An RNA of 177 nucleotides, treated with 2A3 and DMS and read out base by base. DMS (dimethyl sulfate) methylates the pairing face of unpaired adenines and cytosines. For DMS, 17,421 sequencing reads were counted. Values cover nucleotides 27 to 126. The data come from the RNA Mapping Database (RMDB), library OK2TST.
RNA sequence: GGGAACGACUCGAGUAGAGUCGAAAAACGAUGACGGACCCGAUCGCAGACUUUUUGACCCGUCUGCGUAACGCCAACUCGGCGUAUCACGACGAGGUCAGCUUGCCGCACUCCAAGCUCAAGGCCAAUUCUAUUGCUAUUUCGAUAGCAAUAGAAUAAAAGAAACAACAACAACAAC
Reactivity to 2A3 in 0.01 (KOAc 150mM, MgCl2 10mM, bicine 150mM(pH8.5), 24C), signal-to-noise 7, nucleotides 027 to 126: a010c050g050a080u150g060a030c060g020g030a030c010c010c030g010a030u050c030g000c030a030g030a140c040u110u140u060u200u180g060a030c010c010c000g000u000c020u030g000c000g000u010a060a010c010g000c000c010a100a140c170u090c200g000g000c000g010u010a030u080c030a030c070g060a010c020g020a050g000g020u010c010a000g000c000u010u060g030c020c020g010c020a030c040u020c020c010a030a020g010c010u020c040a040a030g030g000c010c010a030
Reactivity to DMS in 0.01 (KOAc 150mM, MgCl2 10mM, bicine 150mM(pH8.5), 24C), signal-to-noise 9, nucleotides 027 to 126: a090c080g000a090u000g010a090c060g010g000a140c040c020c030g010a090u010c050g010c030a060g000a070c060u000u000u010u010u010g010a040c030c020c070g010u000c000u010g030c050g010u000a090a020c010g010c010c010a090a150c230u010c160g010g010c000g020u000a040u000c060a070c090g000a040c050g000a130g020g000u000c010a030g010c090u010u000g010c040c050g010c060a060c060u000c030c030a040a090g000c040u010c080a060a080g010g000c040c070a090